Structure probing data (2A3) for a 207-nucleotide construct.
[RMDB]
RNA sequence: GGGAACGACUCGAGUAGAGUCGAAAAGUUAGUUUUAUUGGUUGGUUUAUGGUGAUAGGAGGUAUUUUUAUGAACUCCAUUUAGUACACCUCAUUCCUAAUGUAUUAAGUCUUUCCAAUUCUCUUAUAACAGUUUUUCCGUACUUUAAGCUUGUCACCCAUUGGAAAGGUUUCGACCUUUCCAAUGGAAAAGAAACAACAACAACAAC
Reactivity to 2A3 in 0.01 (KOAc 150mM, MgCl2 10mM, bicine 150mM(pH8.5), 24C), signal-to-noise 1, nucleotides 027 to 156: g000u020u050a030g030u080u040u070u090a110u020u090g030g010u010u000g000g070u100u030u000a030u170g020g020u000g050a040u070a070g010g000a000g000g020u010a130u000u110u050u110u120a140u140g070a070a050c000u000c000c000a000u070u070u070a010g010u020a070c020a020c010c020u030c010a000u030u040c030c040u020a120a080u100g110u140a110u040u100a100a020g050u000c000u030u140u070c000c000a010a040u050u000c050u000c030u110u170a140u080a300a100c010a070g030u010u030u010u070u020c000c010g060u000a070c080u080u060u080a050a060g030c090u080u010g000u020c010a010c010

It was measured as part of the RMDB library OK3TST. Values are in units of 0.01, from 0 to 300, in steps of 10. The reactions ran in a buffer of 150 mM KOAc, 10 mM MgCl2 and 150 mM bicine (pH 8.5), at 24 C.